[RMDB]
RNA sequence: GGGAACGACUCGAGUAGAGUCGAAAAACGUUGAUAUGGAUUUACUCCGAGGAGACGAACUACCACGAACAGGGUAAACUCUACCCGUGGCGUCUCCGUUUGACGAGUAAGUCCUUAGUCAACAUGCAAACCUUGACCUUCGGGUCAAGGAAAAGAAACAACAACAACAAC
Reactivity to DMS in 0.01 (KOAc 150mM, MgCl2 10mM, bicine 150mM(pH8.5), 24C), signal-to-noise 3, nucleotides 027 to 129: a070c140g050u020u000g000a060u050a100u090g000g010a030u030u000u010a010c010u000c050c040g000a050g030g010a000g020a000c030g000a110a070c150u060a300c000c030a020c010g030a160a210c290a120g070g000g040u000a000a120a150c240u000c140u070a030c120c030c000g020u010g000g020c000g000u000c010u030c000c000g000u050u090u080g030a200c300g050a020g030u020a000a010g000u050c020c000u030u000a090g000u020c050a040a000c010a110u120g020c140a060a000a110
Reactivity to 2A3 in 0.01 (KOAc 150mM, MgCl2 10mM, bicine 150mM(pH8.5), 24C), signal-to-noise 4, nucleotides 027 to 129: a000c100g020u010u020g010a010u010a030u050g000g000a000u000u020u000a000c000u000c000c000g010a040g000g000a010g010a010c000g010a050a030c100u180a090c090c010a000c030g090a170a080c100a160g020g010g040u090a070a130a090c110u100c040u120a010c010c010c020g000u000g010g000c000g000u000c000u000c000c010g000u050u070u060g030a010c020g000a000g000u010a000a000g000u000c000c000u000u000a010g000u010c000a000a000c010a010u060g000c050a010a060a060